[RMDB]
RNA sequence: GGGAACGACUCGAGUAGAGUCGAAAACGGCCUAUAAAUGCUAACGGGGAUUUGCGUUAUACACCAAGUAAUUAUAGUUUAAAAGAUAUCGAAAAUCUCAUGGUCAUAAUCUCACAGGAUCACAAUAUCCACCACUAGUAUUCGUACUAGUGGUGGAAAAAGAAACAACAACAACAAC
Reactivity to 2A3 in 0.01 (KOAc 150mM, MgCl2 10mM, bicine 150mM(pH8.5), 24C), signal-to-noise 1, nucleotides 027 to 126: c000g040g060c000c000u170a140u160a190a110a000u290g080c050u060a090a060c070g000g020g020g000a020u000u000u170g020c000g000u060u000a050u050a050c080a040c050c060a080a030g000u010a070a140u230u130a060u140a210g060u150u050u050a070a130a010a030g030a000u030a010u060c010g020a010a150a000a000u000c020u000c010a010u100g000g030u020c030a020u070a140a080u000c000u040c000a050c040a060g100g010a070u170c110a060c010a120a070u030a090
Reactivity to DMS in 0.01 (KOAc 150mM, MgCl2 10mM, bicine 150mM(pH8.5), 24C), signal-to-noise 2, nucleotides 027 to 126: c200g050g030c040c020u020a190u020a060a100a090u000g010c080u010a060a120c100g020g010g000g000a060u010u000u000g010c020g000u000u020a050u000a050c130a100c100c060a060a080g000u010a050a090u020u000a100u010a140g000u010u000u000a080a030a130a140g030a070u030a050u000c030g000a080a080a070a010u010c000u000c050a060u000g000g020u000c050a090u000a060a070u000c030u000c110a090c140a050g020g010a110u010c080a060c140a110a100u010a090